Background
Source: RMDB library OK3TST, as collected in RNAgym. Chemical mapping of a 207-nucleotide RNA with 2A3 and DMS. Conditions: 150 mM KOAc, 10 mM MgCl2 and 150 mM bicine (pH 8.5), 24 C. For 2A3, 3,147 sequencing reads were counted. For DMS the reverse transcriptase was MarathonRT. 2A3 adducts were read by reverse transcription with SuperScript II with manganese.

RNA sequence: GGGAACGACUCGAGUAGAGUCGAAAAUACUUUUUGAACUUGCGACCGCUUGCGCGGAGUUUACGACGGUAAUCGCUGGAAAUAAUGGCGAGCGCCGCCGCGAACAUUACCGCCGGGAAAACGACUUCCAGAACAUCACGAAACGCGAUCAUGCGUACGGUUAACAUUAUUUCGAUAAUGUUAACCGAAAAGAAACAACAACAACAAC
Reactivity to 2A3 in 0.01 (KOAc 150mM, MgCl2 10mM, bicine 150mM(pH8.5), 24C), signal-to-noise 3, nucleotides 027 to 156: u120a040c040u110u120u060u050u190g070a110a050c020u040u070g040c050g050a110c030c030g090c110u130u110g030c100g000c010g090g020a030g000u010u020u020a020c020g000a000c000g020g010u040a050a040u000c010g000c020u020g060g080a110a160a060u240a130a200u300g040g000c010g000a030g020c130g000c020c000g000c000c000g000c000g020a020a000c000a050u040u110a050c010c010g000c000c010g000g020g000a020a080a010a030c040g060a040c010u060u030c030c000a010g030a100a080c030a070u130c070a020c160g090a110a130a010c010g000c000g050a120u130c060a070u220g010c000g000u040a020
Reactivity to DMS in 0.01 (KOAc 150mM, MgCl2 10mM, bicine 150mM(pH8.5), 24C), signal-to-noise 2, nucleotides 027 to 156: u000a060c080u000u000u000u000u000g010a050a070c080u000u000g030c030g010a160c010c050g040c030u000u020g020c090g050c050g010g000a140g010u000u000u010a040c000g020a010c000g000g020u000a040a100u000c010g040c010u010g040g010a160a160a170u000a100a160u010g030g020c000g000a080g020c210g030c000c010g090c020c000g000c010g010a010a040c030a160u000u000a060c020c040g010c000c000g010g010g000a060a030a080a060c050g000a110c050u000u010c040c020a150g030a090a080c040a140u000c080a090c090g000a050a080a070c040g000c010g010a100u000c070a130u010g030c040g020u000a160